This 207-nucleotide RNA was probed chemically with 2A3.
For 2A3 the reverse transcriptase was SuperScript II with manganese.
High 2A3 reactivity points to a flexible backbone, as in loops and unpaired stretches.
Source: RMDB library OK3TST, as collected in RNAgym.
[RMDB]
RNA sequence: GGGAACGACUCGAGUAGAGUCGAAAACUUGCAGUUCUUUCUUGAAUUCAUCAUAGUCGAUCACGGGGCAAUCCUUUCAAACUUUUCCAUGUGGCACCCCUACAGUUCGGUAAUCCGAAUGCCAUCGCCGAAUAUUUCAACACGGAAUACCGUUACAGGAUGGAAUCUUGUUCGCAAGAUUCCAUCCAAAAGAAACAACAACAACAAC
Reactivity to 2A3 in 0.01 (KOAc 150mM, MgCl2 10mM, bicine 150mM(pH8.5), 24C), signal-to-noise 1, nucleotides 027 to 156: c060u100u150g000c050a050g020u020u000c000u060u080u000c030u070u040g180a150a070u210u080c020a050u140c000a060u140a130g060u110c050g050a060u070c050a020c140g000g000g000g080c130a030a090u100c030c020u030u070u080c100a160a090a000c060u090u070u110u000c050c050a020u060g020u010g070g000c050a060c000c020c000c000u070a140c070a100g000u030u000c000g000g000u000a100a060u000c030c030g060a040a010u100g020c000c140a140u100c060g000c050c030g110a110a000u070a060u110u080u160c160a080a030c080a000c030g000g000a030a040u030a260c000c000g050u030u060a030c090a010